Structure probing data (DMS and 2A3) for a 177-nucleotide construct. The RNA was probed in 150 mM KOAc, 10 mM MgCl2 and 150 mM bicine (pH 8.5) at 24 C. DMS adducts were read by reverse transcription with MarathonRT. For DMS, 7,851 sequencing reads were counted.
RNA sequence: GGGAACGACUCGAGUAGAGUCGAAAAUCGCUGUUGCAACCUACCUCAUCCUCUUCGCGCUGGUCGUGCUGUUCGUCGUGCCAGCCUCUCAAGCCAAUGGGCCGCUCGACGGCGAUACGCAGUGGCAUGCAUAUCAGGUAUUCGUACCUGAUAUGCAAAAAGAAACAACAACAACAAC
Reactivity to DMS in 0.01 (KOAc 150mM, MgCl2 10mM, bicine 150mM(pH8.5), 24C), signal-to-noise 3, nucleotides 027 to 126: u010c060g020c040u000g030u010u000g020c080a090a100c060c030u010a090c060c010u000c050a100u000c030c020u000c080u000u010c090g030c110g000c050u000g000g020u020c020g000u010g000c030u010g010u010u010c050g010u010c020g010u000g000c030c040a080g010c010c020u010c070u010c090a090a130g020c080c200a090a110u000g000g010g020c010c130g000c020u000c080g010a070c050g000g000c010g000a030u000a070c060g010c030a050g010u000g010g000c040a200
Reactivity to 2A3 in 0.01 (KOAc 150mM, MgCl2 10mM, bicine 150mM(pH8.5), 24C), signal-to-noise 3, nucleotides 027 to 126: u060c010g010c050u050g030u140u090g030c030a070a080c010c010u030a030c020c000u040c020a080u040c010c000u030c000u060u080c040g000c000g020c040u040g000g060u060c020g030u040g020c040u040g060u140u110c030g000u020c010g010u010g010c050c010a000g010c010c010u010c000u020c010a070a060g000c000c010a040a080u080g000g040g030c000c000g000c000u030c020g080a110c020g030g000c010g020a030u030a090c040g000c010a010g000u040g090g000c020a040